Structure probing data (2A3 and DMS) for a 177-nucleotide construct. Values cover nucleotides 27 to 126.

RNA sequence: GGGAACGACUCGAGUAGAGUCGAAAACGCCGGUGUCUGGACACCCGCAGUACGUCGCAGCUUCGAUCCCGUAUCGGGUGCCUCUCAAGCCUGCCGCGCCUGGAUUACUGCGGUUCAGUUCUUGUCCGUUAUGCAUAUCCUUCGGGAUAUGCAUAACAAAAGAAACAACAACAACAAC
Reactivity to 2A3 in 0.01 (KOAc 150mM, MgCl2 10mM, bicine 150mM(pH8.5), 24C), signal-to-noise 1, nucleotides 027 to 126: c060g030c000c050g080g000u100g000u070c040u080g010g030a050c010a010c010c020c010g060c030a030g010u040a010c020g030u000c020g000c020a020g020c020u070u060c080g080a120u050c000c020c000g040u090a150u210c000g000g010g050u060g040c020c000u050c000u030c020a050a030g050c000c030u020g000c020c000g010c010g000c020c020u110g030g020a050u050u070a030c000u030g050c020g030g020u030u050c020a040g020u050u020c000u020u110g060u040c030c020
Reactivity to DMS in 0.01 (KOAc 150mM, MgCl2 10mM, bicine 150mM(pH8.5), 24C), signal-to-noise 3, nucleotides 027 to 126: c180g010c100c050g010g020u000g000u000c030u000g000g000a030c050a070c160c030c020g020c070a020g020u000a020c080g020u000c240g020c050a070g000c050u000u010c090g010a090u000c020c020c040g030u000a080u010c090g000g010g000u010g010c060c050u010c060u010c080a040a070g000c120c040u000g010c030c050g000c050g000c080c030u010g010g000a070u000u000a030c030u000g010c020g010g030u000u010c060a070g000u000u000c030u000u010g000u010c080c090
It was measured as part of the RMDB library RFMREP. For 2A3 the reverse transcriptase was SuperScript II with manganese. The 2A3 profile rests on 1,658 reads.